[RMDB]
The record gives the reactivity of an RNA of 170 nucleotides to 2A3 and DMS. Conditions: 150 mM KOAc, 10 mM MgCl2 and 150 mM bicine (pH 8.5), 24 C. For 2A3, 24,922 sequencing reads were counted. For DMS the reverse transcriptase was MarathonRT. For 2A3 the reverse transcriptase was SuperScript II with manganese.

RNA sequence: GGGAACGACUCGAGUAGAGUCGAAAAGUCUCCUGGACGCCCCGCCCGGUCGGGAUGGGCCGCAGUUCCCGACGAGGAGCCCGCAGGUGGGAGGAUCAGCCACCGGAGGGGACGCGAUGCCAAAGAGUUACUAAGAGAUUCGUCUCUUAGAAAAGAAACAACAACAACAAC
Reactivity to 2A3 in 0.01 (KOAc 150mM, MgCl2 10mM, bicine 150mM(pH8.5), 24C), signal-to-noise 9, nucleotides 027 to 129: g030u010c020u010c040c030u030g040g030a030c030g040c020c020c000c010g070c010c010c010g130g070u130c110g040g010g020a040u060g060g040g000c000c030g040c020a020g010u030u030c000c000c000g020a010c030g020a080g020g010a010g030c010c020c010g060c050a060g000g050u070g030g020g030a080g050g010a080u080c050a020g080c000c010a020c020c000g000g040a010g020g010g000g000a010c010g010c030g050a040u120g030c010c010a080a080a010g060a010g060u080u060a050
Reactivity to DMS in 0.01 (KOAc 150mM, MgCl2 10mM, bicine 150mM(pH8.5), 24C), signal-to-noise 9, nucleotides 027 to 129: g010u000c050u020c040c010u030g010g010a090c110g000c030c010c030c010g030c020c010c020g000g000u040c020g020g020g020a030u010g030g040g000c040c070g000c100a080g000u030u000c010c000c020g000a120c040g000a090g000g000a130g000c060c040c030g030c170a130g020g030u030g010g000g010a080g040g020a040u010c100a120g010c040c030a050c020c000g000g000a290g000g030g030g000a060c000g030c030g030a040u020g010c010c040a090a080a090g030a060g020u000u000a150